RNA sequence: GGGAACGACUCGAGUAGAGUCGAAAAGGGGUCAGGACAACACUCGAGGCCAUGCGAGUGCUGCUGAAGCCUCCACGGCAGCACGAUGAGCAUGGCUACCCACCGAGUGCUAAUCCUGACGGAGGCACCCAAAGGGCAUGUCUUCGGACAUGCCCAAUCUGGGUGCCUUGUUCGCAAGGCACCCAGAAAAAGAAACAACAACAACAAC
Reactivity to 2A3 in 0.01 (KOAc 150mM, MgCl2 10mM, bicine 150mM(pH8.5), 24C), signal-to-noise 1, nucleotides 027 to 156: g030g020g030g000u000c000a000g000g020a010c030a080a000c000a080c000u000c000g000a010g000g000c000c010a010u000g000c010g010a100g010u000g000c000u000g000c000u030g010a110a040g000c010c000u000c000c000a010c010g010g020c000a000g020c010a020c010g210a290u250g130a020g000c000a010u000g000g010c000u000a010c000c020c010a050c000c020g000a000g000u000g000c010u080a110a100u040c000c000u000g000a000c000g000g010a000g000g020c000a060c000c000c000a070a100a060g000g000g000c020a010u000g020u010c020u080u130c300g070g000a000c000a000u000g000c000c000c000a000a010
Reactivity to DMS in 0.01 (KOAc 150mM, MgCl2 10mM, bicine 150mM(pH8.5), 24C), signal-to-noise 1, nucleotides 027 to 156: g000g000g060g040u000c000a040g000g000a120c010a060a060c000a000c000u000c000g080a300g000g000c000c020a060u000g000c000g030a300g000u000g000c000u030g030c000u000g000a030a110g010c000c020u030c000c020a300c000g030g020c000a000g000c000a000c020g000a130u010g000a290g010c000a020u000g000g010c020u030a000c000c080c020a300c010c030g020a050g050u000g000c000u000a260a160u000c030c000u000g010a130c020g000g030a040g000g080c000a000c010c000c020a130a140a300g010g130g000c000a040u000g010u000c000u000u000c300g070g000a000c010a000u000g100c000c000c010a000a000
Conditions: 150 mM KOAc, 10 mM MgCl2 and 150 mM bicine (pH 8.5), 24 C. Structure probing data (2A3 and DMS) for a 207-nucleotide construct. Values cover nucleotides 27 to 156. Source: RMDB library RNAMAK, as collected in RNAgym.